Source information: This 207-nucleotide RNA was probed chemically with 2A3.
RNA sequence: GGGAACGACUCGAGUAGAGUCGAAAAAGACGGUUCGCCGUCUGUGUGAACCUUUGUGUACACGAUGCAUAGCAAGGAACGACGUCCCAUUGGGACGUCGAAUUCUGAUGACCUAUGGGCAGUGUACACUCUGGUAUAACUCUAGGUUCGCCUAGAACGCCCUGGAAACCUUCGGGUUUCCAGGGCGAAAAGAAACAACAACAACAAC
Reactivity to 2A3 in 0.01 (KOAc 150mM, MgCl2 10mM, bicine 150mM(pH8.5), 24C), signal-to-noise 1, nucleotides 027 to 156: a010g010a000c000g040g030u020u170c270g050c000c000g020u040c000u020g220u050g000u030g120a030a050c000c000u000u000u000g040u000g000u020a000c050a000c000g090a110u100g010c110a000u000a000g040c020a100a300g000g000a040a000c000g020a000c000g000u050c030c010c120a090u140u300g000g000g000a000c000g000u000c000g020a000a010u060u000c000u000g050a080u080g070a050c000c000u030a030u000g000g240g060c170a040g010u030g020u060a000c000a000c000u000c000u000g040g030u050a050u210a100a040c000u040c000u000a000g010g090u000u060c200g020c030c000u010a010g040a080a010
The data come from the RNA Mapping Database (RMDB), library RNAMAK. Reactivities are given for positions 27 through 156. For 2A3, 557 sequencing reads were counted.